This 177-nucleotide RNA was probed chemically with DMS and 2A3. The data come from the RNA Mapping Database (RMDB), library RFMREP. For 2A3, 8,887 sequencing reads were counted. For 2A3 the reverse transcriptase was SuperScript II with manganese. The reactions ran in a buffer of 150 mM KOAc, 10 mM MgCl2 and 150 mM bicine (pH 8.5), at 24 C. Reactivities are rounded to 0.1 and cut off at 0 and 3. As a SHAPE reagent, 2A3 marks flexible, mostly unpaired nucleotides at the ribose 2'-OH. Reactivities are given for positions 27 through 126.

RNA sequence: GGGAACGACUCGAGUAGAGUCGAAAAACUCGGCAAAUUAGCCCCGUAACUUCGGAAGAAGGGGUGCCUGCAGCGAUGCAGGCCGCAGAGAAAUGGCCCAACCGACUGUUUAUCAAAAACACAGCACCAUAUCAAUCUAGUUCGCUAGAUUGAUAUGAAAAGAAACAACAACAACAAC
Reactivity to DMS in 0.01 (KOAc 150mM, MgCl2 10mM, bicine 150mM(pH8.5), 24C), signal-to-noise 5, nucleotides 027 to 126: a130c020u010c010g010g020c020a110a110a160u010u000a110g010c010c010c000c030g000u000a140a180c130u000u000c090g040g040a080a100g000a100a130g010g000g010g020u000g010c000c000u000g000c020a010g000c300g000a140u000g010c000a000g000g010c010c260g010c020a030g000a030g000a050a040a060u010g010g020c010c010c010a080a100c120c090g010a130c070u010g010u000u000u000a100u010c120a050a040a060a070a080c200a030c050a060g000c060a110c150
Reactivity to 2A3 in 0.01 (KOAc 150mM, MgCl2 10mM, bicine 150mM(pH8.5), 24C), signal-to-noise 6, nucleotides 027 to 126: a010c010u010c000g010g000c020a050a070a230u170u060a160g030c010c000c000c000g050u040a040a080c040u090u090c170g150g060a120a040g020a050a020g030g000g000g010u040g000c000c000u000g000c000a000g010c020g070a040u010g000c000a000g000g000c000c020g010c000a020g010a000g020a030a160a020u080g080g020c030c000c000a020a030c040c030g130a140c050u020g070u060u070u050a200u160c130a060a080a060a070a010c030a010c000a030g030c040a030c040